[RMDB]
Conditions: 150 mM KOAc, 10 mM MgCl2 and 150 mM bicine (pH 8.5), 24 C. An RNA of 177 nucleotides, treated with 2A3 and DMS and read out base by base. DMS adducts were read by reverse transcription with MarathonRT. The data come from the RNA Mapping Database (RMDB), library M2PK90.
RNA sequence: GGGAACGACUCGAGUAGAGUCGAAAAUAUUUCGCCCCAUUGUAGCUCAGUGCUAGAGCGCUUCACUCGUAUAAAAAUACUGCCAUGAAGAGGUCCGCGGUUCAAUCCCGCGUGGUGGCAAAAAAAAAUCUUGGAUAUCAUUCGUGAUAUCCAAGAUAAAAGAAACAACAACAACAAC
Reactivity to 2A3 in 0.01 (KOAc 150mM, MgCl2 10mM, bicine 150mM(pH8.5), 24C), signal-to-noise 1, nucleotides 027 to 126: u170a090u020u050u120c090g020c000c000c000c000a070u030u150g060u030a020g010c010u000c160a120g000u020g130c010u060a030g010a010g040c040g000c010u030u000c010a040c050u060c040g010u170a090u130a300a190a060a050a020u090a100c080u070g030c030c010a010u030g010a060a080g000a040g060g020u040c050c010g020c000g010g000u010u020c050a030a020u050c030c000c000g000c020g000u010g040g000u010g010g000c000a000a050a040a020a020a020a000a000
Reactivity to DMS in 0.01 (KOAc 150mM, MgCl2 10mM, bicine 150mM(pH8.5), 24C), signal-to-noise 3, nucleotides 027 to 126: u010a180u010u010u000c060g000c040c000c020c040a090u000u000g020u000a060g010c010u000c110a100g030u000g010c050u000a050g010a050g010c020g000c040u000u000c020a100c030u000c080g020u000a080u010a020a090a100a100a090u000a050c100u000g000c060c060a070u000g000a040a070g000a050g000g000u010c100c030g010c010g000g010u000u000c210a070a300u000c300c010c010g010c000g010u000g000g010u000g020g010c020a000a020a000a000a030a050a050a110